RNA sequence: GGGAACGACUCGAGUAGAGUCGAAAAUGUCACACAGUAGCGAGGGAUGCAAUUAAUUGCAUCUACACCAAGCUCAAGGCUUGGAUUUCGACUAGUGUCGAGUCGUUCCCACUCCCUACGCCCACAACCGAAACAAACUAUUCGUAGUUUGUUUCGGAAAAGAAACAACAACAACAAC
Reactivity to DMS in 0.01 (KOAc 150mM, MgCl2 10mM, bicine 150mM(pH8.5), 24C), signal-to-noise 1, nucleotides 027 to 126: u020g030u010c000a050c070a070c130a140g030u000a070g020c050g040a050g000g000g000a010u000g010c010a010a040u010u010a060a050u020u000g020c000a000u000c000u000a050c040a130c000c000a010a010g020c000u000c120a150a070g000g000c000u000u000g010g000a110u000u010u000c020g000a000c000u000a050g010u010g000u000c000g010a010g010u010c000g010u000u000c000c000c010a020c060u000c010c000c020u010a090c090g000c030c010c000a120c190a120a120